[RMDB]
RNA sequence: GGGAACGACUCGAGUAGAGUCGAAAACUGAAUACAAUAUGUCACGUUAUUCCGCAUCUUCUGAAGAAGAUGUUCCGAAUAUAUCCUUAGAAAGGAGGUGAUCCAGCCGCACCUUCCGAUACGGCUACCUCACUCUCAGGUUCGCCUGAGAGUGAGGAAAAGAAACAACAACAACAAC
Reactivity to DMS in 0.01 (KOAc 150mM, MgCl2 10mM, bicine 150mM(pH8.5), 24C), signal-to-noise 1, nucleotides 027 to 126: c100u000g040a100a100u000a140c280a130a080u020a050u010g000u000c010a020c100g020u000u000a010u000u000c030c210g050c000a000u010c000u000u020c000u020g080a100a140g010a010a000g020a000u000g000u000u000c270c120g000a030a020u000a040u000a070u010c000c000u000u000a080g000a010a220a150g000g000a000g040g000u010g000a030u020c100c180a040g040c010c020g030c000a010c040c120u000u010c090c080g040a090u000a040c030g020g010c000u000a110
Reactivity to 2A3 in 0.01 (KOAc 150mM, MgCl2 10mM, bicine 150mM(pH8.5), 24C), signal-to-noise 2, nucleotides 027 to 126: c020u020g020a040a000u220a150c110a150a070u170a090u300g110u110c010a030c190g030u030u010a030u020u000c030c010g000c000a010u000c000u070u010c070u140g300a300a300g000a000a010g000a170u000g020u030u050c030c010g000a000a010u070a000u000a000u080c000c000u030u030a040g120a100a120a000g030g000a010g000g010u010g010a040u030c040c000a020g050c020c000g000c040a000c000c000u100u030c050c000g050a020u020a050c020g000g010c000u070a160